[RMDB]
An RNA of 177 nucleotides, treated with DMS and read out base by base. The RNA was probed in 150 mM KOAc, 10 mM MgCl2 and 150 mM bicine (pH 8.5) at 24 C. For DMS, 740 sequencing reads were counted.

RNA sequence: GGGAACGACUCGAGUAGAGUCGAAAAAAGACGAUCUCUCAAACCCAAGGGAAGUGUUGUGGAGUCACGCGAACAGGACGUGCAGUGGACUGCUAGCCAUAAGCCUUGCGGAGUGACUGAGAAAGAACAAGCUGCUAGGAUUCGUCCUAGCAGCUUGAAAAGAAACAACAACAACAAC
Reactivity to DMS in 0.01 (KOAc 150mM, MgCl2 10mM, bicine 150mM(pH8.5), 24C), signal-to-noise 1, nucleotides 027 to 126: a130a040g000a060c120g000a130u000c040u000c020u000c010a090a070a240c000c000c000a080a050g010g010g030a070a230g040u000g010u000u000g020u000g000g000a080g030u000c040a040c010g010c040g030a080a090c070a090g030g000a070c080g000u000g000c160a150g020u010g010g000a090c060u000g000c040u000a110g000c090c050a070u010a100a080g000c000c010u000u000g000c030g070g030a180g000u000g010a040c160u000g000a080g010a040a050a110g010a120a160